Annotation:
Chemical mapping of a 177-nucleotide RNA with DMS and 2A3. For 2A3, 2,860 sequencing reads were counted. The DMS profile rests on 2,478 reads. The RNA was probed in 150 mM KOAc, 10 mM MgCl2 and 150 mM bicine (pH 8.5) at 24 C.
[RMDB]
RNA sequence: GGGAACGACUCGAGUAGAGUCGAAAAAUGGUAUGCCGUACCCACAAAAUGUUGAAAUGGCAACAACAGUAGAGCAAAUUAUCAGGAAUAAUGGUGCCAUUCCAGCAACCAUAGCCAUUAUAGAUGGCACCCAACCAAACUUCGGUUUGGUUGGGUGAAAAGAAACAACAACAACAAC
Reactivity to DMS in 0.01 (KOAc 150mM, MgCl2 10mM, bicine 150mM(pH8.5), 24C), signal-to-noise 2, nucleotides 027 to 126: a000u010g010g000u040a060u020g020c000c040g040u050a130c030c020c010a150c290a140a060a140a040u010g050u020u000g000a080a070a000u000g000g000c000a000a080c040a090a050c130a150g020u050a100g030a150g000c100a070a030a070u020u010a050u010c080a140g010g010a100a110u010a120a090u000g000g000u000g050c000c000a020u020u000c100c010a020g000c040a040a210c050c000a000u010a040g000c000c020a000u000u020a090u030a010g010a020u000g000g030
Reactivity to 2A3 in 0.01 (KOAc 150mM, MgCl2 10mM, bicine 150mM(pH8.5), 24C), signal-to-noise 5, nucleotides 027 to 126: a000u090g020g000u100a070u160g040c030c040g060u100a060c010c030c000a030c030a030a070a010a100u090g000u020u020g000a010a020a010u010g030g050c030a010a010c020a050a060c020a030g090u130a000g070a030g100c090a090a120a050u130u100a070u170c100a060g010g190a090a120u210a130a040u070g050g000u030g000c000c000a000u030u000c030c000a000g000c010a050a070c020c000a020u100a080g070c000c020a010u020u080a140u070a210g190a060u040g010g000